[RMDB]
RNA sequence: GGGAACGACUCGAGUAGAGUCGAAAAAUGCCGCAUUCAGUGACGGUAACUCUAGUGGGCGACUGUCGAUCUAGCGUUGACAUCUACAUACUAUAUAGUAAUACCAAUACUCAAGACUACGAAACGGAUAUCACCUCGUAUUCGUACGAGGUGAUAUAAAAGAAACAACAACAACAAC
Reactivity to DMS in 0.01 (KOAc 150mM, MgCl2 10mM, bicine 150mM(pH8.5), 24C), signal-to-noise 3, nucleotides 027 to 126: a090u000g000c030c000g010c100a050u000u000c030a050g060u030g000a090c050g010g010u000a090a030c050u020c050u010a110g000u020g030g010g010c140g040a050c160u010g010u000c020g000a030u010c040u010a100g020c100g000u030u010g000a080c090a080u000c020u000a040c030a040u000a050c050u000a050u020a150u040a050g000u000a060a110u020a100c090c030a100a120u050a020c040u010c100a060a080g000a160c040u000a040c060g020a040a070a080c100g000g000
Reactivity to 2A3 in 0.01 (KOAc 150mM, MgCl2 10mM, bicine 150mM(pH8.5), 24C), signal-to-noise 7, nucleotides 027 to 126: a030u090g010c020c010g030c040a060u060u090c080a050g070u000g130a130c010g020g050u060a080a050c000u010c010u050a030g040u100g030g020g000c020g030a070c060u010g010u050c010g010a020u000c030u090a030g040c020g070u030u030g030a010c000a050u020c020u050a080c020a040u090a060c040u040a030u080a080u070a180g060u090a060a070u020a130c000c030a040a060u050a060c030u030c100a070a040g030a060c050u050a030c100g070a070a090a010c030g040g000

Structure probing data (DMS and 2A3) for a 177-nucleotide construct. Conditions: 150 mM KOAc, 10 mM MgCl2 and 150 mM bicine (pH 8.5), 24 C. The data come from the RNA Mapping Database (RMDB), library OK1LIB. For 2A3, 6,525 sequencing reads were counted.